[RMDB]
RNA sequence: GGGAACGACUCGAGUAGAGUCGAAAACAUCUUUAGGCUAAUGAUUCCGGUGUCUGGAUUUACAAUCCCUGCAAUGGAUUUUAAGGUCAUGCUUUUACCGCAUCCUGAAGGGCCGAGAAUGCCUAAAGGUGCCAUGCUGCUUCGGCAGCAUGGCACCAAAAGAAACAACAACAACAAC
Reactivity to 2A3 in 0.01 (KOAc 150mM, MgCl2 10mM, bicine 150mM(pH8.5), 24C), signal-to-noise 1, nucleotides 027 to 126: c060a020u040c090u070u030u000a000g060g060c050u110a300a000u270g070a000u000u000c000c020g030g000u020g100u050c000u000g000g160a180u040u070u160a140c260a000a000u080c050c060c020u070g090c060a090a000u070g050g000a000u080u000u040u120a030a030g050g050u070c300a010u000g050c090u010u000u000u270a020c080c090g010c000a000u050c000c000u000g000a000a060g000g000g140c000c020g160a200g030a090a000u060g000c000c000u000a000a000a000